[RMDB]
RNA sequence: GGGAACGACUCGAGUAGAGUCGAAAAGACUAAAGAAACCAACAGCACUUCGUGGAAAUUCGAGACCAGGAGGGCAGGGUGUGGAGGACCAAGAAUCCCACAGACCUUGGCAUCCAGUGCCAGGAGCCCUGCCUGGGAGUGGUACAUUAGCUCUCACUAUUACUGGCAAUUUCGAUUGCCAGUAAUAAAAAGAAACAACAACAACAAC
Reactivity to DMS in 0.01 (KOAc 150mM, MgCl2 10mM, bicine 150mM(pH8.5), 24C), signal-to-noise 2, nucleotides 027 to 156: g030a140c020u000a030a050a160g000a110a110a190c020c000a050a100c070a150g030c040a090c060u010u000c030g030u000g000g010a130a080a150u000u010c080g010a110g020a100c000c020a100g020g000a110g030g030g050c010a070g030g040g030u000g050u000g020g030a100g020g000a060c010c020a110a090g010a110a080u000c010c000c020a160c030a150g000a070c020c010u010u000g050g030c000a080u000c060c150a120g000u010g000c000c010a070g000g000a270g000c020c010c020u000g020c000c070u020g000g020g020a050g020u000g010g000u020a080c120a090u000u010a060g040c040u000c000u000c000a110c180
Reactivity to 2A3 in 0.01 (KOAc 150mM, MgCl2 10mM, bicine 150mM(pH8.5), 24C), signal-to-noise 3, nucleotides 027 to 156: g010a010c020u080a100a000a030g110a150a130a050c040c050a040a090c020a090g120c030a020c110u060u050c100g030u060g060g100a080a080a070u170u090c060g010a030g030a110c000c030a010g020g040a020g000g020g000c000a010g030g000g030u040g000u010g030g050a100g000g040a020c020c010a020a040g030a060a050u040c000c040c000a030c010a010g140a120c000c030u070u080g000g000c000a010u020c130c080a100g080u060g050c020c010a020g010g040a050g010c000c000c000u070g100c020c000u000g000g030g010a030g030u030g020g000u040a030c030a090u030u070a020g010c020u010c000u020c050a020c060